[RMDB]
RNA sequence: GGGAACGACUCGAGUAGAGUCGAAAACUAUGGUGAGACCCUAUCUAGUAUAGCAAUCCACCAAGCAGGUGAUUUCACACAAUUCAGGUUCUCAUAGAAAAUGCGCCCUGACUUGACAGGUAUGGUCAUCGGCAUAUCAUUUCGAUGAUAUGCCGAUAAAAGAAACAACAACAACAAC
Reactivity to DMS in 0.01 (KOAc 150mM, MgCl2 10mM, bicine 150mM(pH8.5), 24C), signal-to-noise 4, nucleotides 027 to 126: c050u010a050u030g010g010u020g000a030g000a050c150c120c040u040a020u010c020u040a090g010u020a060u010a020g040c130a090a050u020c090c090a040c000c000a060a100g040c130a060g000g000u000g010a100u010u000u030c090a050c160a200c070a020a070u020u000c030a050g000g000u010u040c000u000c030a050u000a050g020a030a040a040a080u010g000c140g000c300c010c020u000g000a020c050u020u000g020a130c060a040g010g000u000a020u010g030g000u000c060
Reactivity to 2A3 in 0.01 (KOAc 150mM, MgCl2 10mM, bicine 150mM(pH8.5), 24C), signal-to-noise 5, nucleotides 027 to 126: c010u020a060u150g040g010u080g050a130g030a010c020c010c000u000a020u010c050u050a060g060u120a060u030a060g020c030a010a030u020c050c020a010c010c010a040a020g170c120a050g000g080u050g020a080u010u080u070c080a050c000a000c010a040a020u040u050c030a010g020g000u080u060c030u000c010a050u090a070g170a030a180a000a000u100g020c030g010c020c000c000u000g020a040c030u010u020g020a030c020a040g010g090u080a050u080g020g020u020c040